This 207-nucleotide RNA was probed chemically with 2A3 and DMS. As a SHAPE reagent, 2A3 marks flexible, mostly unpaired nucleotides at the ribose 2'-OH. The DMS profile rests on 2,170 reads.
RNA sequence: GGGAACGACUCGAGUAGAGUCGAAAACGCUGGGAGCUGUGGGACAUGCCUUGGACUGAAGCGCGCACGGUCCGAGGCAACAGCCGUAACAUCAGCUCCUGUGCUGAAGCGCGCACGGCAACCGAAAGGUGCGAGAGACCGUCGUUCGCGACGGUAAGCUUACCACAUAUUUCGAUAUGUGGUAAGCAAAAGAAACAACAACAACAAC
Reactivity to 2A3 in 0.01 (KOAc 150mM, MgCl2 10mM, bicine 150mM(pH8.5), 24C), signal-to-noise 3, nucleotides 027 to 156: c070g010c000u060g010g000g000a010g010c020u000g000u100g070g080g120a090c090a170u130g000c000c020u000u000g000g020a000c000u040g030a160a020g010c020g010c020g020c040a030c050g020g000u010c010c000g020a000g010g020c010a010a010c000a010g040c030c070g090u170a090a060c020a060u170c020a010g000c000u000c000c010u030g040u050g000c070u130g030a140a030g010c000g010c010g010c000a000c030g080g000c030a060a210c010c010g030a080a040a000g030g000u020g000c040g020a120g000a000g020a080c000c000g000u030c000g020u040u090c270g000c000g110a000c000g000g010u000a030a040
Reactivity to DMS in 0.01 (KOAc 150mM, MgCl2 10mM, bicine 150mM(pH8.5), 24C), signal-to-noise 1, nucleotides 027 to 156: c130g010c010u010g050g050g010a050g070c020u000g060u010g010g000g000a140c050a300u000g000c000c010u000u010g050g000a040c020u010g010a050a130g000c020g040c010g000c000a300c030g000g010u000c000c090g030a100g050g020c020a000a020c070a230g000c010c050g000u000a110a070c110a230u050c020a050g050c000u000c000c010u000g000u000g000c020u000g000a140a100g000c050g010c000g000c030a070c040g010g020c000a100a070c050c030g000a040a050a120g000g000u000g000c000g030a130g020a150g010a050c020c000g000u000c010g030u000u000c300g010c040g030a060c030g000g010u000a000a150
Conditions: 150 mM KOAc, 10 mM MgCl2 and 150 mM bicine (pH 8.5), 24 C.